[RMDB]
RNA sequence: GGGAACGACUCGAGUAGAGUCGAAAAGAGCUGUAGUACAGCAAGAAGCACGCGAUCCUUGGCACCGCGUGCAAGACAAUAACGCCGGCAAAGAAGGAAAGCCGGCAUAAGUGCCAAGUAAGAGAGACCGAUAUUAAUCGUUCGCGAUUAAUAUCGGAAAAGAAACAACAACAACAAC
Reactivity to DMS in 0.01 (KOAc 150mM, MgCl2 10mM, bicine 150mM(pH8.5), 24C), signal-to-noise 2, nucleotides 027 to 126: g000a230g020c020u010g010u000a070g000u030a300c030a030g000c000a130a170g000a100a070g010c000a000c000g000c010g010a040u070c080c000u000u000g040g000c000a010c040c000g010c010g010u020g000c030a070a000g000a270c140a040a070u030a080a130c240g000c000c000g000g000c000a100a130a090g010a070a140g000g000a020a090a040g000c000c000g040g050c020a000u020a000a020g000u000g000c000c000a040a000g030u080a060a040g000a100g010a100g050a130
Reactivity to 2A3 in 0.01 (KOAc 150mM, MgCl2 10mM, bicine 150mM(pH8.5), 24C), signal-to-noise 4, nucleotides 027 to 126: g110a030g000c010u010g010u130a110g080u190a110c010a000g020c030a000a040g140a060a020g010c030a010c010g010c000g010a100u120c030c010u000u010g000g000c000a000c010c000g000c010g010u000g000c000a000a000g040a010c050a040a050u110a160a020c060g000c000c000g000g000c030a090a100a100g130a100a050g150g060a150a100a020g000c000c000g000g000c000a000u000a000a000g010u000g000c000c030a000a000g040u090a140a010g060a010g010a000g020a010
The record gives the reactivity of an RNA of 177 nucleotides to DMS and 2A3. The RNA was probed in 150 mM KOAc, 10 mM MgCl2 and 150 mM bicine (pH 8.5) at 24 C. Source: RMDB library OK1LIB, as collected in RNAgym. 2A3 adducts were read by reverse transcription with SuperScript II with manganese. For 2A3, 4,818 sequencing reads were counted.